Conditions: 150 mM KOAc, 10 mM MgCl2 and 150 mM bicine (pH 8.5), 24 C. This 177-nucleotide RNA was probed chemically with DMS and 2A3. 2A3 adducts were read by reverse transcription with SuperScript II with manganese. The data come from the RNA Mapping Database (RMDB), library TTRDES. For DMS, 1,952 sequencing reads were counted. For DMS the reverse transcriptase was MarathonRT. For 2A3, 4,600 sequencing reads were counted.

[RMDB]
RNA sequence: GGGAACGACUCGAGUAGAGUCGAAAAGAUAUGGACUCGCAUACUGCGAUAAGGUUGUCUCGGAAACGAGACAAGACCUUUUGACGCAGUGCGAGUCCUAAGUCAAAGGUCUUGUUCGCAAGACCAAGCUCAGUGUUAGGUUCGCCUAACACUGAGCAAAAGAAACAACAACAACAAC
Reactivity to DMS in 0.01 (KOAc 150mM, MgCl2 10mM, bicine 150mM(pH8.5), 24C), signal-to-noise 1, nucleotides 027 to 126: g020a020u000a150u000g010g000a000c000u000c000g030c010a120u000a160c080u000g000c000g020a130u000a020a010g000g010u000u010g000u000c010u000c020g020g000a050a040a070c000g030a030g000a010c000a030a020g000a140c000c010u000u010u010u000g020a210c090g040c010a020g020u000g000c000g000a040g000u000c000c000u010a000a070g000u000c010a090a080a100g010g000u000c000u040u010g000u010u030c240g010c010a000a020g010a040c010c010a080a090
Reactivity to 2A3 in 0.01 (KOAc 150mM, MgCl2 10mM, bicine 150mM(pH8.5), 24C), signal-to-noise 2, nucleotides 027 to 126: g010a010u020a000u070g000g000a000c000u010c010g000c030a040u110a300c020u020g050c110g300a220u170a300a000g000g000u030u010g000u050c000u010c000g020g010a010a010a010c010g000a010g000a000c010a010a000g020a030c010c000u000u020u090u300g300a190c150g020c010a000g010u010g000c020g010a000g010u000c000c000u010a000a000g000u000c010a000a070a170g010g010u000c010u040u040g020u050u170c300g000c150a010a000g020a000c000c000a000a020